[RMDB]
RNA sequence: GGGAACGACUCGAGUAGAGUCGAAAAUAUUACCGCAAUACAUGGAACUUGGCCUUUCGAUGGGACGUCGGUACGUGCAACGCACGAUCGCAAGUAUCCCGGAAGAAGCCCUUACGGAGAUGCGAAAAAUGAUAGCAACGUUCGCGUUGCUAUCAUUAAAAGAAACAACAACAACAAC
Reactivity to DMS in 0.01 (KOAc 150mM, MgCl2 10mM, bicine 150mM(pH8.5), 24C), signal-to-noise 3, nucleotides 027 to 126: u040a070u000u030a110c050c020g000c070a080a020u010a110c090a040u030g010g000a050a110c070u000u010g000g000c180c030u020u000u030c030g000a300u030g040g000g050a070c080g010u050c000g040g010u010a010c020g010u000g000c040a090a120c200g040c010a030c020g010a040u000c000g000c040a090a080g000u010a180u000c010c000c000g030g040a140a040g010a050a060g000c150c030c130u000u030a060c120g000g000a090g000a020u030g010c010g020a020a050a050
Reactivity to 2A3 in 0.01 (KOAc 150mM, MgCl2 10mM, bicine 150mM(pH8.5), 24C), signal-to-noise 1, nucleotides 027 to 126: u200a050u080u100a110c040c000g000c040a050a040u080a100c060a090u090g070g020a070a020c080u070u100g020g000c000c020u060u060u060c040g040a060u100g000g000g030a010c020g020u300c040g030g010u100a300c010g020u020g000c070a240a050c220g000c000a010c000g000a010u020c010g020c030a030a130g030u040a110u010c010c000c000g010g010a050a090g000a040a010g000c000c000c010u110u030a040c030g060g030a070g000a020u060g020c030g090a110a000a000

This 177-nucleotide RNA was probed chemically with DMS and 2A3. 2A3 adducts were read by reverse transcription with SuperScript II with manganese. For 2A3, 3,591 sequencing reads were counted. The DMS profile rests on 3,789 reads.